Structure probing data (2A3 and DMS) for a 207-nucleotide construct. Source: RMDB library M2RFPK, as collected in RNAgym. For DMS, 1,849 sequencing reads were counted. For DMS the reverse transcriptase was MarathonRT. The reactions ran in a buffer of 150 mM KOAc, 10 mM MgCl2 and 150 mM bicine (pH 8.5), at 24 C. DMS (dimethyl sulfate) methylates the pairing face of unpaired adenines and cytosines.

RNA sequence: GGGAACGACUCGAGUAGAGUCGAAAACUCCCAUCCAACUCCUAUUCCAACACGUCCUCGUCGUACAGAGUGGUAACAUGUGUCACCACAUAUCCAAGCUUGGGUACACGGUCUUGACCCAACCCCUAAAACAGAGACGAGUUCGCUCGUCUCUGAACUUAACGCCUAGGUUCGCCUAGGCGUUAAGAAAAGAAACAACAACAACAAC
Reactivity to 2A3 in 0.01 (KOAc 150mM, MgCl2 10mM, bicine 150mM(pH8.5), 24C), signal-to-noise 4, nucleotides 027 to 156: c050u020c020c010c010a040u080c030c020a040a050c010u010c000c000u020a030u060u030c010c020a030a030c050a030c070g040u020c010c020u010c030g120u020c020g020u100a020c040a070g120a030g070u020g010g030u070a060a040c020a110u160g070u070g040u100c040a040c090c000a020c030a020u090a050u030c040c030a050a030g060c070u110u090g050g000g020u050a060c060a010c030g030g040u040c030u080u150g050a050c000c000c000a000a040c000c010c000c000u050a090a100a050a040c010a000g000a000g000a000c010g000a000g000u030u040c200g020c040u000c000g000u000c000u000c000u010g010a010a010
Reactivity to DMS in 0.01 (KOAc 150mM, MgCl2 10mM, bicine 150mM(pH8.5), 24C), signal-to-noise 1, nucleotides 027 to 156: c070u010c000c000c000a180u000c090c000a070a080c050u040c010c000u010a020u010u000c050c010a090a090c060a040c110g000u020c030c000u000c030g000u000c020g020u000a140c060a100g010a090g060u010g020g010u000a020a040c040a130u020g020u000g050u000c000a050c020c010a020c020a090u010a080u000c060c030a070a180g010c090u000u000g000g050g020u000a070c050a070c050g020g000u000c040u010u000g000a290c020c010c020a000a060c010c000c000c020u020a010a140a120a220c010a060g000a050g000a010c030g020a050g020u000u010c270g000c030u000c010g050u000c000u000c000u000g000a020a050